[RMDB]
RNA sequence: GGGAACGACUCGAGUAGAGUCGAAAAGUCUCCUAGAGAGCUUGGCCGUCGGGCCUUACACUCCGACUUGCUGAGUUUCUCUAGGAGAGUCCCUUUCCCAGCCAGAGGUGGCUGGUCAAACAAUACCAAAACUCUUGCUAGUUCGCUAGCAAGAGAACUAUCAGGUAUAGUUCGCUAUACCUGAUAGAAAAGAAACAACAACAACAAC
Reactivity to DMS in 0.01 (KOAc 150mM, MgCl2 10mM, bicine 150mM(pH8.5), 24C), signal-to-noise 3, nucleotides 027 to 156: g020u010c000u000c010c010u000a030g000a070g000a040g040c010u010u000g020g020c000c300g020u000c040g040g060g040c080c100u020u010a100c090a080c080u000c010c000g010a040c020u000u010g010c010u010g000a040g010u010u010u000c000u000c010u000a020g010g000a020g010a010g000u000c020c020c020u010u010u000c110c010c000a030g000c010c010a030g010a300g010g020u010g010g010c010u010g030g010u000c070a010a040a070c110a050a060u000a050c020c040a050a100a120a100c010u010c000u000u000g010c010u000a000g010u000u000c300g020c010u010a010g000c000a020a030g010a010g000a020a100
Reactivity to 2A3 in 0.01 (KOAc 150mM, MgCl2 10mM, bicine 150mM(pH8.5), 24C), signal-to-noise 5, nucleotides 027 to 156: g020u000c000u000c000c000u010a000g000a000g000a000g020c000u010u010g010g000c020c010g000u000c000g000g020g010c020c020u060u130a060c090a020c030u040c000c000g010a010c010u090u270g000c000u020g000a000g010u050u300u030c000u000c000u000a000g000g000a000g000a000g000u000c000c000c000u010u090u030c000c010c000a010g010c000c000a010g010a020g020g020u010g010g000c010u090g030g050u190c040a010a010a020c060a080a000u010a010c000c000a010a030a100a160c000u000c000u000u000g000c000u000a000g030u070u040c240g010c110u000a000g000c000a000a000g000a000g000a000a000

The data come from the RNA Mapping Database (RMDB), library M2RFPK. Structure probing data (DMS and 2A3) for a 207-nucleotide construct. The reactions ran in a buffer of 150 mM KOAc, 10 mM MgCl2 and 150 mM bicine (pH 8.5), at 24 C. For 2A3 the reverse transcriptase was SuperScript II with manganese.